[RMDB]
The record gives the reactivity of an RNA of 207 nucleotides to 2A3. The RNA was probed in 150 mM KOAc, 10 mM MgCl2 and 150 mM bicine (pH 8.5) at 24 C. For 2A3, 742 sequencing reads were counted.

RNA sequence: GGGAACGACUCGAGUAGAGUCGAAAAACACUCGUUCGCGAGUGUAAAAAGCGUACUACCUGUGGCACAGCAAGGUUAGCCGGUCCCAAAUAGGACCGUGAACUGAUGACCUGUGCGUAACAUCAGGUAUCGCAAAAAACCCCGGUUCGCCGGGGAAGGACAAUCUUGGAUUCGUCCAAGAUUGUCCAAAAGAAACAACAACAACAAC
Reactivity to 2A3 in 0.01 (KOAc 150mM, MgCl2 10mM, bicine 150mM(pH8.5), 24C), signal-to-noise 1, nucleotides 027 to 156: a000c000a000c000u000c000g060u100u080c040g040c040g040a010g000u070g000u040a000a030a000a110a000g030c030g030u040a070c040u000a000c000c000u000g000u020g100g020c000a000c010a000g040c040a100a220g050g020u040u060a050g160c100c040g000g000u010c050c000c020a110a160a020u300a200g050g000a000c000c000g030u050g030a060a020c010u030g090a140u190g020a110c010c000u000g020u000g040c000g040u050a010a010c020a130u130c000a000g000g000u000a010u230c040g020c000a000a000a000a000a000a140c000c020c010c000g000g020u000u010c110g070c020c040g000g150g070g000a000a010